The data come from the RNA Mapping Database (RMDB), library RNAMAK. An RNA of 207 nucleotides, treated with 2A3 and read out base by base.
[RMDB]
RNA sequence: GGGAACGACUCGAGUAGAGUCGAAAAGGCACUUUCGAGUGCCAACGCGAUAUGGAAGACCGUAGGCUUGGAUUUAUCACAGAGGUCGGAAACGACUCCCCACCUGUGAUUGUCAGCCUAUAGGUCUUCCUAAGUCAUUUCACAGAUUCGUCUGUAACAAAUCCCGAUGAUUCGUCAUCGGGAUUUGAAAAGAAACAACAACAACAAC
Reactivity to 2A3 in 0.01 (KOAc 150mM, MgCl2 10mM, bicine 150mM(pH8.5), 24C), signal-to-noise 2, nucleotides 027 to 156: g010g000c020a010c020u000u100u300c300g090a000g010u000g000c000c010a000a000c040g070c050g010a010u020a030u240g000g000a010a000g000a020c000c000g000u000a000g010g060c070u080u240g200g020a070u300u300u190a030u150c000a010c000a000g030a020g000g030u000c010g030g000a000a120a010c060g040a070c000u060c000c050c000c000a030c010c010u000g000u000g000a000u010u010g010u010c020a000g000c000c000u020a000u020a000g000g010u000c010u000u040c000c010u000a000a000g010u000c020a020u060u280u280c060a000c000a010g000a030u060u160c080g140u130c080u210g070u140a070a000
2A3 adducts were read by reverse transcription with SuperScript II with manganese.